[RMDB]
RNA sequence: GGGAACGACUCGAGUAGAGUCGAAAAGUCGUGAAGUGGUCUAUGUCGAAUGGGCGACGUCCGACGGGACGCACAACGACAACUUCCUCGCCGAGUUGCGGGACCGCAUCCCGGCGGACGCUGAUCAGACCUAGCGAUUAUUCGUAAUCGCUAGGUCAAAAGAAACAACAACAACAAC
Reactivity to 2A3 in 0.01 (KOAc 150mM, MgCl2 10mM, bicine 150mM(pH8.5), 24C), signal-to-noise 5, nucleotides 027 to 126: g040u020c010g020u030g120a170a040g030u060g070g000u030c030u070a250u160g050u060c040g040a100a080u100g010g100g020c070g050a160c040g020u020c000c010g000a010c000g000g000g000a010c010g010c020a010c020a070a040c010g160a080c010a010a010c030u090u070c010c010u050c010g040c070c050g020a010g000u000u010g000c020g010g030g110a090c050c050g000c000a020u000c000c000c000g000g010c020g000g000a010c030g010c070u070g020a100u080c070a030
Reactivity to DMS in 0.01 (KOAc 150mM, MgCl2 10mM, bicine 150mM(pH8.5), 24C), signal-to-noise 2, nucleotides 027 to 126: g020u000c030g030u010g030a080a100g000u010g010g000u000c060u000a030u010g020u070c070g000a090a050u020g000g040g000c010g010a090c000g000u000c010c000g000a060c000g000g010g010a030c020g000c000a000c070a130a280c010g010a060c000a010a070c050u010u010c060c000u000c070g010c020c050g000a070g010u000u000g000c010g000g000g000a220c300c000g000c010a060u000c000c000c010g020g000c000g000g000a010c050g000c070u030g040a050u000c090a110